[RMDB]
Chemical mapping of a 207-nucleotide RNA with 2A3. The data come from the RNA Mapping Database (RMDB), library OK3TST. For 2A3 the reverse transcriptase was SuperScript II with manganese.
RNA sequence: GGGAACGACUCGAGUAGAGUCGAAAAUCAGCCUUUGCCAGAUCAGCAUAUCCUGAAAUAGGCUGACAGGGAAAGCAGCCUGCGGGAAAAUGGUUGGUCUCUGCUUUUGAGAGAUUUGUCUCCUCGCUGGGCACUUGUGAAGCAAGUACGCAGAGAAGCCUAUAUGUCCCUUCGGGGACAUAUAGGCAAAAGAAACAACAACAACAAC
Reactivity to 2A3 in 0.01 (KOAc 150mM, MgCl2 10mM, bicine 150mM(pH8.5), 24C), signal-to-noise 3, nucleotides 027 to 156: u050c010a020g030c000c010u040u090u050g060c040c030a060g030a170u080c030a020g050c020a030u040a050u130c010c010u040g050a170a170a130u060a040g000g000c000u000g020a020c020a030g110g030g050a030a120a030g020c000a000g000c000c000u060g010c050g010g000g000a030a020a050a140u160g050g010u030u010g040g000u010c000u000c010u040g040c000u070u080u200u150g130a140g000a000g010a050u090u070u150g090u020c050u010c010c000u020c040g020c010u030g010g040g020c010a000c010u040u020g010u010g120a060a010g020c000a000a040g030u030a030c050g020c090a000g100a010g020a130a030
About this RNA: The reactions ran in a buffer of 150 mM KOAc, 10 mM MgCl2 and 150 mM bicine (pH 8.5), at 24 C.